Structure probing data (2A3 and DMS) for a 177-nucleotide construct. Reactivities are given for positions 27 through 126. The RNA was probed in 150 mM KOAc, 10 mM MgCl2 and 150 mM bicine (pH 8.5) at 24 C. The data come from the RNA Mapping Database (RMDB), library RFM100.
RNA sequence: GGGAACGACUCGAGUAGAGUCGAAAACGGCACGUCUCUCGGAGAGCCAAGACAAAUCCAAGUCAAAAACCAACAAACCAAAUAAAUGACUUAACAAAAUGCUCCCCGUCUUUAAAUUUUGGAAAAGAUGAAUAGGUCUGUUCGCAGACCUAUUCAUAAAAGAAACAACAACAACAAC
Reactivity to 2A3 in 0.01 (KOAc 150mM, MgCl2 10mM, bicine 150mM(pH8.5), 24C), signal-to-noise 3, nucleotides 027 to 126: c030g000g060c020a020c060g040u000c000u010c000u000c030g050g090a050g000a020g060c020c030a050a000g030a040c020a010a130a000u060c020c000a000a060g050u070c030a000a070a000a090a110c110c030a060a160c100a160a070a100c020c020a100a150a000u090a030a080a100u150g010a010c000u100u180a100a030c050a070a090a020a000u040g000c020u040c000c000c000c000g030u060c020u000u080u010a120a240a220u050u100u010u050g030g020a060a120a000a000g110
Reactivity to DMS in 0.01 (KOAc 150mM, MgCl2 10mM, bicine 150mM(pH8.5), 24C), signal-to-noise 1, nucleotides 027 to 126: c060g000g050c090a030c100g000u040c010u000c020u000c000g070g030a120g030a080g060c000c080a080a010g000a160c100a030a130a100u080c080c060a090a060g030u000c010a140a080a010a080a130c180c100a080a080c250a000a050a170c080c050a060a050a060u010a000a040a140u000g000a030c000u030u010a140a130c080a050a060a150a140u000g010c020u000c010c000c000c060g000u000c060u000u010u030a010a100a150u120u000u050u000g000g000a050a150a160a090g010